This 207-nucleotide RNA was probed chemically with 2A3 and DMS.
RNA sequence: GGGAACGACUCGAGUAGAGUCGAAAAGGGGUCCGUACGAUAAGGAGACAGCUGCUUGGAUUUAUAACUGAAGCCUCCACGGUUAUUGUCAGCAGCUUUCUCCUUUUGACGUACGGACGGAGGCACCCAAACCUCCUUACCUUCGGGUAAGGAGGAAGACUACAUUAGUGUUCGCACUAAUGUAGUCAAAAGAAACAACAACAACAAC
Reactivity to 2A3 in 0.01 (KOAc 150mM, MgCl2 10mM, bicine 150mM(pH8.5), 24C), signal-to-noise 5, nucleotides 027 to 156: g090g000g040g020u010c010c000g000u000a000c000g040a080u040a160a040g000g010a000g000a010c020a010g020c000u010g010c020u140u260g110g010a080u300u300u070a010u040a010a000c020u020g070a130a040g060c020c030u030c040c020a030c000g000g000u010u000a010u010u030g010u030c060a020g000c000a000g010c000u000u010u000c000u000c000c000u000u010u010u010g010a000c000g000u000a000c000g000g000a000c000g000g000a000g010g020c020a060c010c010c000a030a080a150c000c010u010c000c000u000u000a000c000c000u020u060c240g140g000g000u010a000a000g000g030a000g010g000a000a010
Reactivity to DMS in 0.01 (KOAc 150mM, MgCl2 10mM, bicine 150mM(pH8.5), 24C), signal-to-noise 2, nucleotides 027 to 156: g000g040g030g020u000c010c020g010u000a010c020g020a140u010a020a030g000g010a060g010a040c070a030g030c000u000g000c000u000u020g030g010a080u010u000u020a010u000a030a000c010u000g010a040a130g020c030c020u000c010c030a300c040g030g000u000u000a010u000u000g020u000c030a060g030c010a030g030c020u000u000u000c010u010c030c000u000u000u000u010g010a230c130g030u000a030c040g000g000a020c020g000g010a020g050g040c050a150c010c000c010a060a110a180c010c000u000c000c010u000u000a020c000c000u000u010c300g050g020g010u000a020a020g000g010a010g010g000a000a020

The RNA was probed in 150 mM KOAc, 10 mM MgCl2 and 150 mM bicine (pH 8.5) at 24 C.
For 2A3, 6,950 sequencing reads were counted.
It was measured as part of the RMDB library RNAMAK.
Values cover nucleotides 27 to 156.